[RMDB]
RNA sequence: GGGAACGACUCGAGUAGAGUCGAAAAGAUAUGGAUUUCGACAUGAGCAGCACAACUAUUCGGAAACGAACGAAUUGUGUGGGCUCAACAGCGAAAUCCUAAGUCAAAAUCGCAGUUCGCUGCGAAACCGUACGUUAACCUUCGGGUUAACGUACGGAAAAGAAACAACAACAACAAC
Reactivity to DMS in 0.01 (KOAc 150mM, MgCl2 10mM, bicine 150mM(pH8.5), 24C), signal-to-noise 1, nucleotides 027 to 126: g000a030u000a300u000g020g000a000u000u000u010c000g050a090c140a210u030g000a000g000c000a300g010c010a010c010a010a030c130u000a300u000u000c000g020g000a030a070a180c090g000a000a030c070g000a070a020u000u070g000u000g010u000g000g000g040c000u000c000a000a030c290a190g000c000g000a000a000a010u000c000c000u010a030a000g020u000c020a030a080a110a100u000c000g000c000a000g010u000u030c210g090c010u020g020c000g000a000a030a070
Reactivity to 2A3 in 0.01 (KOAc 150mM, MgCl2 10mM, bicine 150mM(pH8.5), 24C), signal-to-noise 1, nucleotides 027 to 126: g080a000u060a020u210g020g000a010u000u000u020c050g000a070c060a140u090g010a000g010c010a000g150c000a000c000a060a190c080u110a070u050u040c000g030g130a190a260a190c040g030a020a010c020g080a220a300u000u010g020u000g000u040g000g220g000c000u020c040a010a000c010a000g000c020g000a000a010a020u010c010c000u000a080a040g070u000c010a000a070a000a240u000c010g000c010a010g010u110u110c220g090c200u050g060c000g000a060a010a000